Source information: This 177-nucleotide RNA was probed chemically with DMS and 2A3. Conditions: 150 mM KOAc, 10 mM MgCl2 and 150 mM bicine (pH 8.5), 24 C. It was measured as part of the RMDB libraries RFM100 and RFMREP.

[RMDB]
RNA sequence: GGGAACGACUCGAGUAGAGUCGAAAAUAUAUACUUGGAUAAGAAUUCCCAGGGAAACUGGGUACCUCGUUUUCCUGUUGCACUAUUUUUUUAGAUUCUUUCUUGAUUUUUUACCAAUCGCCUGAUGUCUCCAAGAGUAAUUCGUUACUCUUGGAGAAAAAGAAACAACAACAACAAC
Reactivity to DMS in 0.01 (KOAc 150mM, MgCl2 10mM, bicine 150mM(pH8.5), 24C), signal-to-noise 2, nucleotides 027 to 126: u010a070u010a080u000a090c050u010u020g000g010a140u020a110a150g000a160a150u020u000c020c010c000a020g010g000g010a020a070a060c000u000g000g000g020u010a030c110c000u000c100g000u000u000u010u010c020c010u000g000u000u030g020c100a080c140u000a000u000u000u000u000u000u000u000a110g000a080u000u000c020u010u000u020c010u010u000g000a010u010u000u020u020u000u000a140c040c030a110a130u010c090g020c040c030u000g020a070u030g000
Reactivity to 2A3 in 0.01 (KOAc 150mM, MgCl2 10mM, bicine 150mM(pH8.5), 24C), signal-to-noise 2, nucleotides 027 to 126: u120a010u020a000u010a060c050u070u170g020g000a040u050a150a110g050a090a090u160u150c000c000c000a000g040g010g000a050a140a030c040u040g000g000g000u110a100c000c000u020c000g060u050u000u000u070c000c000u040g010u060u090g070c100a030c080u020a040u070u070u010u000u000u040u120a070g000a030u030u000c000u010u060u000c010u040u000g020a100u070u020u070u080u090u150a120c000c040a070a040u120c050g050c050c000u100g060a100u080g060